An RNA of 207 nucleotides, treated with DMS and 2A3 and read out base by base. For DMS, 8,880 sequencing reads were counted. 2A3 is a SHAPE reagent: it acylates the 2'-hydroxyl of flexible nucleotides of all four kinds. The RNA was probed in 150 mM KOAc, 10 mM MgCl2 and 150 mM bicine (pH 8.5) at 24 C. For 2A3, 10,632 sequencing reads were counted. For 2A3 the reverse transcriptase was SuperScript II with manganese. DMS adducts were read by reverse transcription with MarathonRT.

[RMDB]
RNA sequence: GGGAACGACUCGAGUAGAGUCGAAAAUGACGUUAAACUGCUGACUCAUACAUACUGACACCGGUUGCUCAACAGGCUGUGUGGGACAAUAGCAUAACAAGGCUGUCAAUUUGAGCUUGACGGCUGCAAAACCUGCAGUACUUCGGUACUGCAGGAACAAACUACAAGAGUUCGCUCUUGUAGUUUGAAAAGAAACAACAACAACAAC
Reactivity to DMS in 0.01 (KOAc 150mM, MgCl2 10mM, bicine 150mM(pH8.5), 24C), signal-to-noise 3, nucleotides 027 to 156: u000g030a100c080g020u000u000a030a170a090c060u000g010c030u000g020a130c020u020c010a050u000a060c030a070u000a070c020u000g000a080c080a050c030c030g030g040u010u010g020c030u000c030a050a070c030a060g010g000c060u000g030u000g040u000g010g020g050a140c030a020a060u000a080g040c020a150u010a080a080c000a100a190g030g020c010u000g010u000c010a030a050u000u010u010g010a130g010c290u000u000g000a030c020g000g010c010u000g000c100a040a060a090a110c000c000u000g000c000a010g010u000a010c000u000u030c240g030g020u000a000c000u000g000c000a000g010g000a020a050
Reactivity to 2A3 in 0.01 (KOAc 150mM, MgCl2 10mM, bicine 150mM(pH8.5), 24C), signal-to-noise 8, nucleotides 027 to 156: u110g040a020c080g010u060u090a130a110a070c070u060g010c020u020g050a070c000u000c020a010u020a050c010a010u130a060c020u060g070a030c020a050c110c050g090g020u100u100g020c030u030c040a030a020c010a050g050g000c040u020g010u000g000u010g020g010g000a020c040a070a120u120a110g020c010a020u030a100a030c030a070a040g030g000c000u000g000u010c000a000a010u050u050u150g030a020g030c010u000u010g000a000c000g010g000c000u020g010c010a020a050a030a110c000c000u000g000c000a000g000u010a000c000u020u070c160g080g000u000a000c000u000g000c000a000g000g000a000a000